Structure probing data (2A3 and DMS) for a 207-nucleotide construct. The DMS profile rests on 1,836 reads.
[RMDB]
RNA sequence: GGGAACGACUCGAGUAGAGUCGAAAAGUUAGGUGAGGCGGCUACACGAACAUAGGCCACUGACCCCGAACGUCGAGAGACGCCCCGGGUCAGGACAGCUCUUCCCGGCUUAAGGGUGGAGCCCAGGUAUCACCCUGGCUAUUCGUAGCCAGGGUAACAUUACUACGCACUUCGGUGCGUAGUAAUGAAAAGAAACAACAACAACAAC
Reactivity to 2A3 in 0.01 (KOAc 150mM, MgCl2 10mM, bicine 150mM(pH8.5), 24C), signal-to-noise 2, nucleotides 027 to 156: g010u050u020a030g020g020u030g010a050g010g100c050g030g050c030u150a050c070a030c090g090a130a020c040a110u170a080g020g100c060c000a040c010u000g000a000c060c000c000c000g040a070a040c000g010u000c000g000a010g000a000g000a080c000g000c010c050c050c020g020g010g000u010c010a000g010g050a010c040a010g000c000u000c000u050u040c000c000c000g060g000c070u190u230a060a120g010g010g000u040g000g020a000g000c000c010c000a030g020g020u060a080u210c020a000c010c000c010u000g000g000c000u000a040u070u130c170g060u100a000g000c000c000a000g050g010g000u000a000a000
Reactivity to DMS in 0.01 (KOAc 150mM, MgCl2 10mM, bicine 150mM(pH8.5), 24C), signal-to-noise 1, nucleotides 027 to 156: g030u000u020a030g010g000u000g010a060g070g020c040g010g040c000u000a090c050a050c040g020a090a070c060a130u000a090g000g000c010c020a170c000u020g000a040c000c010c010c010g020a010a020c010g020u000c010g000a300g010a300g010a020c030g040c010c010c030c140g000g030g000u010c000a010g010g000a090c060a080g000c020u000c010u000u010c000c000c000g000g020c070u020u000a110a030g020g000g000u010g000g020a030g000c020c010c020a050g020g010u000a120u000c080a100c030c000c000u010g010g010c000u010a040u000u000c190g040u010a000g030c040c000a000g000g000g020u010a020a020
Annotation
The RNA was probed in 150 mM KOAc, 10 mM MgCl2 and 150 mM bicine (pH 8.5) at 24 C.